[RMDB]
RNA sequence: GGGAACGACUCGAGUAGAGUCGAAAAGUUCAUCCCCUGAUCAAGGAUGCUCGAAACGGUGAGGCGGAAAGCAAAUUAAAUAACGUCAACCCAUCGGGACGGUUGGCCAGUUAAGAAGUGAGGAUUCAAAAGAUCGAACCGUUCGCGGUUCGAUCAACAUAAAGCGAACGUUCGCGUUCGCUUUAUGAAAAGAAACAACAACAACAAC
Reactivity to DMS in 0.01 (KOAc 150mM, MgCl2 10mM, bicine 150mM(pH8.5), 24C), signal-to-noise 2, nucleotides 027 to 156: g020u000u010c020a160u000c020c000c020c010u000g000a090u010c030a110a110g010g010a050u000g000c030u010c030g010a130a110a090c050g020g030u020g000a100g030g000c030g070g020a090a050a070g020c070a050a060a180u010u000a050a090a140u000a060a100c070g010u000c010a030a030c000c010c070a090u000c060g010g040g000a150c060g000g000u000u000g010g000c020c070a090g010u000u000a060a130g010a060a090g020u000g000a080g050g010a160u010u010c110a030a040a080a120g000a010u000c000g010a010a010c010c000g010u000u030c300g060c000g030g000u000u000c010g000a010u000c000a010a100
Reactivity to 2A3 in 0.01 (KOAc 150mM, MgCl2 10mM, bicine 150mM(pH8.5), 24C), signal-to-noise 4, nucleotides 027 to 156: g050u080u080c040a070u070c030c000c000c020u060g060a110u090c020a020a000g030g000a020u040g010c060u040c100g090a120a100a040c000g010g030u030g020a010g000g020c000g040g000a050a010a010g010c040a040a060a090u160u170a050a070a080u150a040a010c030g010u000c010a010a020c010c010c020a110u140c070g040g040g050a030c040g000g030u010u010g000g000c010c010a030g020u030u020a080a040g030a050a010g020u010g030a030g040g040a050u110u080c050a010a020a020a080g000a020u000c000g000a000a000c010c000g010u040u060c180g020c020g090g000u000u000c000g000a000u000c000a000a000
Annotation: This 207-nucleotide RNA was probed chemically with DMS and 2A3. For DMS the reverse transcriptase was MarathonRT. The reactions ran in a buffer of 150 mM KOAc, 10 mM MgCl2 and 150 mM bicine (pH 8.5), at 24 C. For 2A3, 2,661 sequencing reads were counted. Values cover nucleotides 27 to 156.